[RMDB]
RNA sequence: GGGAACGACUCGAGUAGAGUCGAAAAAAACGCUGGGAGAAUUCGCAGACAUCGAUCGCAUCUACCCACCGUGCCUGAAGCGCGCACGGGCACGAGGAUGCGGGAGUCUGCGUUAUCUCCUGUGCUGAAGCGCGCACGGCAACCGAAAGGUGCGAAAUCUACCUGUACAGUUCGCUGUACAGGUAGAAAAAGAAACAACAACAACAAC
Reactivity to 2A3 in 0.01 (KOAc 150mM, MgCl2 10mM, bicine 150mM(pH8.5), 24C), signal-to-noise 2, nucleotides 027 to 156: a000a000a000c020g000c020u040g000g010g000a020g020a150a200u120u040c010g010c000a000g030a010c000a040u300c110g000a000u010c000g030c000a000u000c000u030a110c050c060c060a010c000c020g000u000g000c000c000u060g030a150a050g010c010g000c000g000c000a000c020g010g010g000c000a000c000g000a010g000g000a000u000g010c000g000g010g010a000g000u010c000u000g000c020g000u000u010a050u000c000u000c000c000u000g000u000g000c000u000g020a140a030g000c000g000c010g000c020a010c010g010g000c000a000a010c010c000g040a080a030a040g030g000u020g020c000g010a090a000a010
Annotation:
An RNA of 207 nucleotides, treated with 2A3 and read out base by base. It was measured as part of the RMDB library RNAMAK. Conditions: 150 mM KOAc, 10 mM MgCl2 and 150 mM bicine (pH 8.5), 24 C.